[RMDB]
RNA sequence: GGGAACGACUCGAGUAGAGUCGAAAACAGUGAGACUUCGGUCUCACUGAAAUGACUAUGCACCAUGACGAGGACGUAGAUGCGGAGGACGACGAGGAACAAAAACAGCAAGGUUCGCCUUGCUGAAUCUACAGUCGGUCUUCGGACCGACUGUAGAAAAAGAAACAACAACAACAAC
Reactivity to DMS in 0.01 (KOAc 150mM, MgCl2 10mM, bicine 150mM(pH8.5), 24C), signal-to-noise 1, nucleotides 027 to 126: c010a010g050u000g000a000g000a020c010u000u010c300g060g000u010c000u000c000a010c000u030g000a020a020a090u020g000a080c050u000a030u000g020c050a050c070c030a050u000g000a060c070g030a070g030g010a060c060g030u030a050g000a100u010g030c040g010g000a060g000g020a090c020g000a050c020g050a080g000g050a050a040c140a070a010a140a180a120c010a000g000c020a000a010g010g000u000u020c190g010c000c010u000u000g000c070u000g000a050a040